[RMDB]
RNA sequence: GGGAACGACUCGAGUAGAGUCGAAAAACUUCAUAGCCCUCAUUAUGGCUUAUGGCAAUUGCACAUUUGGUGCUCCAGAUGAUGCCUCUCGGUUACUUCAUACCGUGCUUGCAAAGGCUGAGUUAUGUAAGAAACACGUUCGCGUGUUUCAAAAGAAACAACAACAACAAC
Reactivity to DMS in 0.01 (KOAc 150mM, MgCl2 10mM, bicine 150mM(pH8.5), 24C), signal-to-noise 7, nucleotides 027 to 129: a090c100u050u000c070a030u000a070g030c040c020c080u030c160a090u050u050a090u060g030g030c020u000u000a090u060g040g020c130a000a000u090u000g040c030a020c000a010u010u010u000g000g000u030g030c220u040c020c040a070g000a000u020g000a000u000g000c030c170u040c020u000c000g010g000u000u050a090c150u030u030c110a090u000a060c000c010g030u020g030c230u030u000g030c080a020a050a060g020g040c020u000g010a100g000u020u010a030u030g030u020a030a040
Reactivity to 2A3 in 0.01 (KOAc 150mM, MgCl2 10mM, bicine 150mM(pH8.5), 24C), signal-to-noise 9, nucleotides 027 to 129: a000c040u070u040c020a060u080a030g020c000c010c010u040c050a150u070u220a140u230g020g000c000u060u070a080u120g060g010c020a020a190u110u070g000c010a020c000a010u050u070u070g090g000u180g050c040u050c010c000a000g000a040u050g030a070u040g030c000c000u030c010u010c000g000g030u030u090a080c030u120u160c030a020u070a090c010c010g030u040g060c040u020u030g000c020a030a030a050g040g000c020u000g010a000g060u070u070a070u100g100u070a140a040